[RMDB]
RNA sequence: GGGAACGACUCGAGUAGAGUCGAAAAUCAAUCAUGUUCGCAUGAUUGAAAAGGUCAGGAGACCAAACCACGACACGCGUCGAAGCGACCGAGCCCGGAGGCAAAGUGCAAUCUUCGGAUUGCACAAGUCUUCCAAACGAUUCGUCGUUUGGAAGACAAAAGAAACAACAACAACAAC
Reactivity to DMS in 0.01 (KOAc 150mM, MgCl2 10mM, bicine 150mM(pH8.5), 24C), signal-to-noise 2, nucleotides 027 to 126: u000c000a000a000u010c010a020u000g010u000u020c100g010c000a000u000g000a010u000u000g000a000a020a110a160g000g010u010c020a130g000g000a230g010a030c020c030a050a080a160c070c030a120c070g000a070c080a060c200g020c110g020u000c020g010a090a180g000c080g010a010c000c040g000a110g030c060c010c040g000g000a080g000g000c090a060a050a110g010u000g000c020a040a000u000c020u000u010c180g000g000a010u010u010g010c010a000c010a050a100
Reactivity to 2A3 in 0.01 (KOAc 150mM, MgCl2 10mM, bicine 150mM(pH8.5), 24C), signal-to-noise 1, nucleotides 027 to 126: u000c010a000a020u000c010a000u010g020u040u070c140g040c120a000u000g010a000u000u010g000a030a000a000a010g050g000u050c030a040g080g240a210g110a070c030c000a050a070a030c050c040a080c050g090a000c030a050c100g110c030g010u000c030g020a070a030g050c030g060a030c000c020g000a010g040c000c040c000g010g060a050g020g020c060a070a010a080g000u020g000c000a000a000u000c020u010u040c210g040g000a000u040u000g000c000a000c000a000a000